[RMDB]
RNA sequence: GGGAACGACUCGAGUAGAGUCGAAAAGACUAAAUCUGCCUGCGUGGAGCGGGCACAGCUGUGAGAGCCCCCUAGGUACAGCGGGGCUGCAGCGUGAUCGCCUGCUCACGCACAGGAAGUUCACGUGGUAUAAGACAGUCUUCGGACUGUCUUAUACAAAAGAAACAACAACAACAAC
Reactivity to 2A3 in 0.01 (KOAc 150mM, MgCl2 10mM, bicine 150mM(pH8.5), 24C), signal-to-noise 3, nucleotides 027 to 126: g030a000c040u090a090a030a110u030c020u040g030c040c030u010g010c000g020u030g120g120a030g000c010g000g000g000c000a000c010a000g000c010u010g010u050g120a250g030a010g140c000c000c010c000c020u040a060g240g220u230a160c070a070g010c110g020g000g010g000c000u010g000c000a000g000c030g070u070g010a140u130c110g000c000c000u010g030c000u010c000a010c000g000c000a000c000a000g020g010a060a000g030u030u070c040a020c140g180u200g070
Reactivity to DMS in 0.01 (KOAc 150mM, MgCl2 10mM, bicine 150mM(pH8.5), 24C), signal-to-noise 3, nucleotides 027 to 126: g000a110c060u000a080a090a180u010c010u000g000c110c160u000g000c010g000u010g020g000a040g030c020g010g010g000c000a030c020a050g000c000u000g010u020g010a240g010a080g000c010c000c000c000c010u000a110g000g010u020a120c280a030g020c150g030g000g010g020c020u000g010c010a010g000c000g020u000g000a060u010c140g010c000c000u000g010c020u000c000a020c000g000c020a030c040a030g000g010a080a080g010u000u000c120a080c140g030u010g000